[RMDB]
RNA sequence: GGGAACGACUCGAGUAGAGUCGAAAAUUCAAUGAAUCUAGACGCCAUUAAUCAUACGCUCAGCUUAGCUAGUGGUGUUGGUGCGAACAUGGGAGCUGCUAGCACAGGUGCAACUUCUCAGGCGCAAAUAAUAAUAGGCAUUCGUGCCUAUUAUUAUAAAAGAAACAACAACAACAAC
Reactivity to DMS in 0.01 (KOAc 150mM, MgCl2 10mM, bicine 150mM(pH8.5), 24C), signal-to-noise 9, nucleotides 027 to 126: u000u010c060a120a110u010g010a090a090u010c050u000a120g020a110c040g010c020c010a050u000u000a060a090u010c080a100u010a070c120g010c030u000c120a090g010c090u000u000a080g010c060u000a060g020u000g010g020u000g000u000u000g020g020u000g010c030g010a050a060c080a100u010g010g010g010a060g020c040u000g010c020u000a100g010c080a070c130a060g010g010u000g000c030a030a030c050u000u000c010u000c040a070g000g000c040g000c060a030a070
Reactivity to 2A3 in 0.01 (KOAc 150mM, MgCl2 10mM, bicine 150mM(pH8.5), 24C), signal-to-noise 4, nucleotides 027 to 126: u060u010c050a020a110u140g120a080a070u060c070u100a080g010a060c010g020c040c010a020u040u090a060a070u080c050a090u040a150c040g020c030u070c060a090g030c060u070u090a010g010c010u010a020g020u010g040g030u030g030u060u030g060g020u020g020c050g040a080a050c060a120u070g040g000g000a010g030c010u010g000c010u060a040g050c050a040c030a110g140g010u050g040c000a000a030c030u130u050c020u000c040a020g040g000c030g000c040a060a080